[RMDB]
An RNA of 177 nucleotides, treated with 2A3 and DMS and read out base by base. DMS adducts were read by reverse transcription with MarathonRT. The RNA was probed in 150 mM KOAc, 10 mM MgCl2 and 150 mM bicine (pH 8.5) at 24 C. For 2A3, 8,104 sequencing reads were counted. The data come from the RNA Mapping Database (RMDB), library RFMREP.
RNA sequence: GGGAACGACUCGAGUAGAGUCGAAAAAGGUGCGGCUGCUGUGCCGCACCUGUGUCAGCAGGUGGCAGAGAGCAGUGCGGCUACGUCUACGCUCCGCGCCCUGGCACGUGGGCUUCGGAAUGAUUAGCAAUACUAAAUGCUUCGGCAUUUAGUAUUGAAAAGAAACAACAACAACAAC
Reactivity to 2A3 in 0.01 (KOAc 150mM, MgCl2 10mM, bicine 150mM(pH8.5), 24C), signal-to-noise 5, nucleotides 027 to 126: a000g010g000u010g000c010g020g010c030u130g020c070u170g160u150g070c000c000g000c000a000c000c000u000g000u010g010u000c000a020g020c060a060g050g020u070g110g030c150a070g160a010g000a000g080c070a030g010u040g120c010g030g000c090u130a090c040g010u000c050u080a030c050g000c010u000c010c000g000c000g000c000c010c000u010g010g010c010a000c010g000u100g020g030g010c030u090u080c060g030g060a170a080u100g060a170u140u120a050g030
Reactivity to DMS in 0.01 (KOAc 150mM, MgCl2 10mM, bicine 150mM(pH8.5), 24C), signal-to-noise 6, nucleotides 027 to 126: a020g010g020u000g010c010g010g020c000u000g030c260u000g010u010g020c010c010g000c000a000c010c000u000g000u000g000u000c050a030g010c140a110g010g010u000g020g040c020a080g010a140g020a050g010c010a030g000u000g010c010g000g000c220u010a050c030g010u000c020u020a040c030g000c020u000c000c030g000c300g000c000c010c010u000g000g000c020a020c030g020u010g010g000g010c040u000u000c050g010g000a090a100u010g000a120u000u000a090g020